[RMDB]
The data come from the RNA Mapping Database (RMDB), library TTRDEL. Structure probing data (DMS and 2A3) for a 177-nucleotide construct. 2A3 adducts were read by reverse transcription with SuperScript II with manganese.
RNA sequence: GGGAACGACUCGAGUAGAGUCGAAAAGAUAUGGACACAGCAACAGCGUCAAGGUCGGAAACGACCUGACGACAUGCUGCGUCCUAAGUCAAACCCAUUGGACGACGUUCGCGUCGUCCAAUGGGAAGUUACCCUUGUCGUUCGCGACAAGGGUAACAAAAGAAACAACAACAACAAC
Reactivity to DMS in 0.01 (KOAc 150mM, MgCl2 10mM, bicine 150mM(pH8.5), 24C), signal-to-noise 2, nucleotides 027 to 126: g010a010u000a300u000g010g000a010c000a030c020a000g010c010a050a120c280a060g000c000g000u000c010a020a080g020g010u010c000g030g010a070a070a090c010g010a000c000c000u000g000a020c000g020a120c050a110u010g000c000u020g030c020g010u000c000c000u000a010a080g000u010c010a130a090a270c000c000c000a000u000u000g000g000a010c000g000a000c010g030u020u020c240g020c010g020u000c020g000u000c000c000a000a000u000g000g010g010a020a030
Reactivity to 2A3 in 0.01 (KOAc 150mM, MgCl2 10mM, bicine 150mM(pH8.5), 24C), signal-to-noise 2, nucleotides 027 to 126: g020a000u040a030u090g000g000a010c020a010c000a040g000c010a030a090c070a300g150c020g000u020c140a250a280g010g000u020c000g000g000a030a060a030c000g010a000c000c000u000g000a000c010g040a040c020a040u050g020c010u000g000c000g000u000c000c000u000a060a010g040u000c070a130a030a120c000c000c000a010u010u000g010g010a000c010g000a020c030g020u050u200c300g030c030g160u020c010g020u000c000c000a000a000u000g010g000g000a000a000